Annotation:
Chemical mapping of a 177-nucleotide RNA with 2A3 and DMS. The RNA was probed in 150 mM KOAc, 10 mM MgCl2 and 150 mM bicine (pH 8.5) at 24 C. DMS adducts were read by reverse transcription with MarathonRT. 2A3 adducts were read by reverse transcription with SuperScript II with manganese.
RNA sequence: GGGAACGACUCGAGUAGAGUCGAAAACAUUGCAGCUUCGGCUGCAAUGAAUCUCUGGUCUCUACGACUGUACUCGAUAGAGGCUGGAGUAGUCGUUCCCGAUGGCGCCCCAAUUCGUUGGGGCGAACCUAAACGAGACUUUCGAGUCUCGUUUAGGAAAAGAAACAACAACAACAAC
Reactivity to 2A3 in 0.01 (KOAc 150mM, MgCl2 10mM, bicine 150mM(pH8.5), 24C), signal-to-noise 5, nucleotides 027 to 126: c000a000u010u000g000c000a000g000c010u060u110c230g190g000c010u000g000c000a000a010u000g000a010a010u030c010u000c000u020g010g000u010c000u000c000u000a010c010g050a020c090u180g190u300a130c050u010c030g090a140u010a020g010a000g010g000c010u000g010g010a000g010u010a010g000u000c000g000u000u000c010c000c000g000a140u110g100g090c020g000c010c000c000c000a010a000u060u050c170g060u090u010g000g000g010g000c000g000a000a000
Reactivity to DMS in 0.01 (KOAc 150mM, MgCl2 10mM, bicine 150mM(pH8.5), 24C), signal-to-noise 3, nucleotides 027 to 126: c000a000u000u000g000c000a010g010c010u000u020c190g040g020c000u000g010c000a010a000u000g000a080a080u010c010u010c010u000g030g010u000c000u000c000u000a030c020g010a030c120u020g010u010a110c280u000c000g000a130u000a020g000a020g000g010c000u000g010g000a020g000u000a020g010u000c000g000u000u000c000c000c010g020a060u010g020g030c010g000c000c010c000c010a010a010u000u010c200g030u000u000g030g000g020g030c000g000a010a020
The DMS profile rests on 3,828 reads.